[RMDB]
This 177-nucleotide RNA was probed chemically with 2A3 and DMS. DMS adducts were read by reverse transcription with MarathonRT. Values cover nucleotides 27 to 126. For DMS, 35,421 sequencing reads were counted. The reactions ran in a buffer of 150 mM KOAc, 10 mM MgCl2 and 150 mM bicine (pH 8.5), at 24 C. 2A3 adducts were read by reverse transcription with SuperScript II with manganese.

RNA sequence: GGGAACGACUCGAGUAGAGUCGAAAAAGCGCUAGAUAUGUACAUGGGUAUUCCCCCUUAUCUGUGUACUAUAUCUGAGUGGACUUGCUUGAUAGGGGGAGUAGUGCAAGUUUGAUAGGUGCGCGAAGUGUAUAUUAAAUUUCGAUUUAAUAUACACAAAAGAAACAACAACAACAAC
Reactivity to 2A3 in 0.01 (KOAc 150mM, MgCl2 10mM, bicine 150mM(pH8.5), 24C), signal-to-noise 6, nucleotides 027 to 126: a000g000c010g010c010u000a000g000a000u000a000u010g000u000a000c000a000u020g060g000g040u080a020u020u040c000c000c000c000c010u040u050a060u130c010u010g010u000g000u000a010c030u060a010u000a000u000c040u040g060a030g090u130g000g020a010c000u000u010g020c010u040u090g060a030u060a020g000g000g000g010g000a010g030u030a000g000u010g010c000a000a010g000u000u000u010g060a070u080a040g060g060u040g000c010g000c000g020a100a020
Reactivity to DMS in 0.01 (KOAc 150mM, MgCl2 10mM, bicine 150mM(pH8.5), 24C), signal-to-noise 5, nucleotides 027 to 126: a170g000c010g010c000u010a020g000a010u000a010u000g000u000a010c000a010u010g010g000g030u010a030u030u000c000c000c000c000c000u010u010a030u010c000u030g020u000g000u000a000c010u050a010u000a000u000c010u000g010a120g020u020g000g000a020c010u000u000g010c010u000u010g010a200u050a020g000g000g000g000g010a040g000u030a090g000u010g000c000a010a020g010u000u000u010g010a130u030a080g000g020u010g000c000g020c010g000a070a080